Structure probing data (DMS and 2A3) for a 207-nucleotide construct. The DMS profile rests on 9,559 reads. Conditions: 150 mM KOAc, 10 mM MgCl2 and 150 mM bicine (pH 8.5), 24 C.
RNA sequence: GGGAACGACUCGAGUAGAGUCGAAAAUGAAGCUUCGGCUUCAAGCAUACCUUUGUGAUAUGACCAUGAGGGAGCAAUGGACCUCCCAUUGGGAGGUCACAUUGCGACGAUCUCAUGGAGAACAUAUCACUCUGGUCGAGACGUGGUUCGCCACGAACUCGAACAUAUUUUUCGAAAUAUGUUCGAGAAAAGAAACAACAACAACAAC
Reactivity to DMS in 0.01 (KOAc 150mM, MgCl2 10mM, bicine 150mM(pH8.5), 24C), signal-to-noise 3, nucleotides 027 to 156: u000g000a050a020g000c010u010u010c300g040g020c000u000u000c010a050a100g020c100a200u000a060c010c000u000u000u000g020u010g010a030u000a000u000g040a150c000c000a030u010g010a050g000g010g000a110g040c020a030a020u000g010g000a050c030c000u000c000c000c020a220u000u000g030g050g030a050g030g000u000c000a010c000a010u000u000g020c020g010a050c160g010a050u010c010u000c000a020u000g000g010a030g010a120a230c020a020u000a010u000c000a020c000u010c030u000g010g010u000c060g010a170g010a170c030g030u000g010g000u000u000c200g020c010c000a040c020g010a030a130
Reactivity to 2A3 in 0.01 (KOAc 150mM, MgCl2 10mM, bicine 150mM(pH8.5), 24C), signal-to-noise 8, nucleotides 027 to 156: u080g000a010a000g000c030u070u140c290g110g000c000u000u000c080a010a010g060c020a130u150a130c000c000u010u010u010g000u000g010a000u000a000u010g190a280c010c000a010u010g000a000g000g000g010a010g000c000a010a000u000g000g010a000c000c000u000c000c020c090a190u100u290g000g000g000a000g000g000u000c050a070c000a050u000u000g000c000g000a020c000g000a000u000c000u000c000a000u000g010g000a030g010a020a010c010a000u000a000u000c000a000c000u000c000u000g030g000u050c070g100a070g010a120c010g000u020g020g040u080u110c210g050c070c000a000c010g030a060a040